RNA sequence: GGGAACGACUCGAGUAGAGUCGAAAAGGCGGCCGUGAGACCAUUGUCGCUGAAUGCGGGUUAUGCAGUGGGCGUUUGAGCACAUAAUCCUCGAAGGGAGGGGCCGGCGACAGGCUGUCUCGCAUUAGCCCGAAUGGUCGUUCGCGAUCGUUCGGGCAAAAGAAACAACAACAACAAC
Reactivity to 2A3 in 0.01 (KOAc 150mM, MgCl2 10mM, bicine 150mM(pH8.5), 24C), signal-to-noise 8, nucleotides 027 to 126: g040g000c030g010g020c030c040g030u050g020a050g020a030c020c050a060u030u030g010u010c010g000c020u020g070a050a020u120g030c030g010g020g000u060u080a030u120g050c060a080g110u180g020g130g000c030g030u060u120u220g060a040g010c040a010c000a080u130a070a030u050c010c000u030c030g120a120a070g070g030g030a070g020g010g000g000c040c000g000g000c000g000a010c000a000g000g030c040u070g010u020c000u000c000g000c010a060u070u140a020
Reactivity to DMS in 0.01 (KOAc 150mM, MgCl2 10mM, bicine 150mM(pH8.5), 24C), signal-to-noise 4, nucleotides 027 to 126: g030g010c010g000g010c030c060g020u000g000a060g010a100c030c040a150u050u000g000u000c040g000c000u000g000a100a070u030g010c110g010g000g010u030u010a050u010g010c070a050g010u030g000g010g000c070g000u020u030u020g000a150g020c050a150c060a040u040a060a080u000c010c000u000c050g010a140a080g000g000g000a070g000g000g000g000c120c010g000g000c000g000a050c030a050g000g000c080u030g000u000c010u000c020g000c060a120u020u010a140